[RMDB]
RNA sequence: GGGAACGACUCGAGUAGAGUCGAAAACUAAGCAGUCUUAUGCUAUUGCCACCAUCAAAGAAAUUGUUGGUGAGCGCCAACUAUUACUUGUGUGGGAGGCUGGCAAGUCCAAACCACCACUCAAUCGCCCUGACUAUGAGUUCGCUCAUAGUCAGGGAAAAGAAACAACAACAACAAC
Reactivity to 2A3 in 0.01 (KOAc 150mM, MgCl2 10mM, bicine 150mM(pH8.5), 24C), signal-to-noise 1, nucleotides 027 to 126: c030u030a000a060g030c010a020g060u130c060u160u300a060u090g010c030u020a100u130u140g000c010c000a000c000c000a000u030c030a020a060a140g030a060a180a130u030u020g010u010u000g030g000u020g060a060g030c050g000c010c010a080a020c010u010a000u170u080a100c130u040u030g030u010g000u020g120g010g000a140g040g000c010u000g000g000c060a130a070g020u030c000c000a000a040a040c000c000a030c020c010a040c010u030c030a000a150u030c100g010